[RMDB]
RNA sequence: GGGAACGACUCGAGUAGAGUCGAAAAGUGGCCGACGGGGCGCGCGCGGCCGGGAGGGGCGGGGCGGACGCACAGCCGCGUUUAGUCUAGCGCAGCGGUCGCGAGCGCUCUGGGUAUCCUGUCCUGAAAUGGCAUAUAACUUCGGUUAUAUGCCAUUAAAAGAAACAACAACAACAAC
Reactivity to DMS in 0.01 (KOAc 150mM, MgCl2 10mM, bicine 150mM(pH8.5), 24C), signal-to-noise 3, nucleotides 027 to 126: g000u020g010g000c050c020g000a200c040g000g000g000g010c000g020c030g000c000g000c010g010g000c000c010g000g000g010a100g030g000g010g010c010g020g010g000g010c010g000g000a000c010g020c020a070c170a120g000c160c100g000c010g010u000u010u010a040g020u000c010u020a120g010c000g010c000a220g010c020g000g010u000c020g000c010g000a050g020c010g000c000u000c010u020g000g000g000u000a090u000c020c000u000g010u010c020c000u010g000a110
Reactivity to 2A3 in 0.01 (KOAc 150mM, MgCl2 10mM, bicine 150mM(pH8.5), 24C), signal-to-noise 3, nucleotides 027 to 126: g110u110g040g040c010c000g050a100c010g000g000g020g000c000g000c000g000c000g000c010g000g000c010c060g030g030g030a120g010g030g050g020c090g000g010g000g000c030g000g020a000c000g050c010a090c080a110g100c100c140g020c000g000u010u000u010a120g000u020c020u070a070g140c030g000c030a020g120c030g010g000u020c000g010c000g010a000g000c000g010c000u000c000u000g010g000g000u000a040u070c000c010u050g050u070c000c000u000g000a060